[RMDB]
RNA sequence: GGGAACGACUCGAGUAGAGUCGAAAAGGCGUCUUCGCUGCCUCGGCCGCCCUGCACUGACCGGUAGCCGCCGUAAUUGCGGCAUUGUUCCCAUAAACGGAUGUGGGUGUGGGUGGCGAAGUAGCAGAUAUACUCGGAUCUUCGGAUCCGAGUAUAUAAAAGAAACAACAACAACAAC
Reactivity to 2A3 in 0.01 (KOAc 150mM, MgCl2 10mM, bicine 150mM(pH8.5), 24C), signal-to-noise 1, nucleotides 027 to 126: g100g040c030g080u000c020u060u040c050g010c020u000g000c010c000u050c020g200g020c020c000g040c000c000c000u050g020c000a030c050u100g150a070c000c010g040g000u050a030g040c020c010g000c030c000g050u100a100a080u090u200g000c000g010g000c010a000u040u230g010u020u020c050c000c000a010u110a030a160a010c010g030g000a040u080g040u200g270g090g000u050g010u090g000g000g000u010g010g000c010g000a000a010g000u080a000g040c020a010g060
Reactivity to DMS in 0.01 (KOAc 150mM, MgCl2 10mM, bicine 150mM(pH8.5), 24C), signal-to-noise 3, nucleotides 027 to 126: g000g000c100g000u000c030u000u010c090g010c000u000g030c000c000u000c090g040g060c040c020g010c030c010c000u020g080c030a020c060u010g020a090c020c000g000g000u000a140g020c010c020g040c000c200g000u000a120a120u040u000g010c010g000g000c010a130u000u010g000u000u010c000c000c000a160u000a050a090a100c020g000g010a200u010g020u000g000g010g010u000g030u000g000g000g050u000g000g020c000g020a020a010g010u000a070g020c010a110g010